The data come from the RNA Mapping Database (RMDB), library TTRDEL.
Structure probing data (DMS and 2A3) for a 177-nucleotide construct.
For 2A3, 1,619 sequencing reads were counted.
2A3 adducts were read by reverse transcription with SuperScript II with manganese.
For DMS, 894 sequencing reads were counted.

RNA sequence: GGGAACGACUCGAGUAGAGUCGAAAAGAUAUGGAGUUGCCAGCUAUGGAGCAUCGGCUCGGAAACGAGCUAGAUGCUAUGAAGUAGGGCACUCUCCUAAGUCAAAACAGGACGUUCGCGUCCUGAAGGUUACACCGAUGUUCGCAUCGGUGUAACCAAAAGAAACAACAACAACAAC
Reactivity to DMS in 0.01 (KOAc 150mM, MgCl2 10mM, bicine 150mM(pH8.5), 24C), signal-to-noise 1, nucleotides 027 to 126: g000a060u010a150u020g000g000a000g000u000u020g030c000c000a040g020c000u000a000u000g020g000a060g010c010a000u000c000g010g030c000u000c000g020g000a050a110a170c000g030a000g010c000u000a000g000a020u000g010c000u000a070u010g010a140a150g010u000a000g010g010g020c050a030c200u010c000u010c000c000u010a030a130g000u000c030a080a040a140a230c020a000g000g010a020c000g000u000u030c250g000c060g030u000c010c010u010g010a030a040
Reactivity to 2A3 in 0.01 (KOAc 150mM, MgCl2 10mM, bicine 150mM(pH8.5), 24C), signal-to-noise 1, nucleotides 027 to 126: g040a000u030a010u070g020g000a000g020u060u020g030c020c040a170g150c290u040a080u130g290g260a230g000c010a010u000c010g000g020c000u010c000g000g000a020a000a000c000g020a010g010c000u010a140g040a000u000g000c010u030a060u030g080a070a040g040u060a010g010g050g010c060a040c060u130c010u000c000c000u030a050a030g030u000c040a000a010a060a210c000a000g000g020a010c000g010u060u060c240g010c000g060u070c000c050u000g000a060a040
The RNA was probed in 150 mM KOAc, 10 mM MgCl2 and 150 mM bicine (pH 8.5) at 24 C.